[RMDB]
Description:
Structure probing data (2A3 and DMS) for a 177-nucleotide construct.

RNA sequence: GGGAACGACUCGAGUAGAGUCGAAAAAGCUGCGCGGAAUCCUCCGCUAUGGGAGGGCGGAGAGGAGGGGCUAAUGGCGAGGGUUGCCGUUCCUGUCGCUCUAUGAUGUGGUCGUAGCAGAUUUACACGUAGUGCAGGAGUUCGCUCCUGCACUACGAAAAGAAACAACAACAACAAC
Reactivity to 2A3 in 0.01 (KOAc 150mM, MgCl2 10mM, bicine 150mM(pH8.5), 24C), signal-to-noise 1, nucleotides 027 to 126: a010g030c020u030g000c000g000c010g050g030a080a040u000c000c020u000c030c000g000c000u050a100u110g110g060g050a040g040g000g040c010g030g000a060g020a030g000g040a050g020g020g040g000c030u060a040a030u070g050g010c020g010a110g050g250g000u070u070g010c030c000g050u060u010c010c010u030g070u050c020g060c070u020c000u070a110u110g100a070u030g080u140g060g050u110c020g000u000a060g000c020a020g000a050u140u150u100a070c130a000
Reactivity to DMS in 0.01 (KOAc 150mM, MgCl2 10mM, bicine 150mM(pH8.5), 24C), signal-to-noise 1, nucleotides 027 to 126: a060g010c010u000g000c060g040c030g030g010a190a090u000c060c050u000c010c020g000c010u000a040u010g000g000g020a050g000g000g000c010g010g000a040g020a190g010g000a040g050g020g010g000c050u020a050a060u010g000g020c050g010a130g000g010g000u010u020g020c020c010g000u000u000c040c060u000g010u000c040g000c020u010c040u000a080u000g000a080u010g040u000g000g000u010c010g000u000a040g000c020a010g000a150u000u000u000a090c190a180
For DMS, 1,357 sequencing reads were counted. Reactivities are rounded to 0.1 and cut off at 0 and 3. The reactions ran in a buffer of 150 mM KOAc, 10 mM MgCl2 and 150 mM bicine (pH 8.5), at 24 C. The 2A3 profile rests on 1,251 reads.